[RMDB]
RNA sequence: GGGAACGACUCGAGUAGAGUCGAAAAUGAGCUCGCUUUCGAGCGAGCUCAAAAGAUAUGGAGUCUGUCCUUCGAUAAGCGUGUAUCGGAAACGAUACAACGCUUUUGACGAAGGCAGACUCCUAAGUCAAAACGGGAUUGCUUUCGAGCAAUCCCGACAAAACGUUCGUUUCGACGAACGUUUUGUAAAAGAAACAACAACAACAAC
Reactivity to 2A3 in 0.01 (KOAc 150mM, MgCl2 10mM, bicine 150mM(pH8.5), 24C), signal-to-noise 1, nucleotides 027 to 156: u060g000a000g010c000u010c000g000c100u140u100u210c300g070a000g000c170g010a000g030c020u000c000a000a000a020a000g000a000u000a030u060g000g010a000g000u000c020u010g300u300c020c020u010u020c060g160a270u070a160a000g000c000g050u000g030u000a000u000c000g000g000a000a000a000c000g050a000u000a000c000a040a030c010g000c010u030u050u010u040g140a040c000g030a000a000g000g000c000a000g000a000c000u000c000c000u000a000a010g020u000c020a000a020a000a050c030g000g000g010a000u000u000g000c000u080u120u180c260g080a100g000c020a000a060u020c000c000c000g000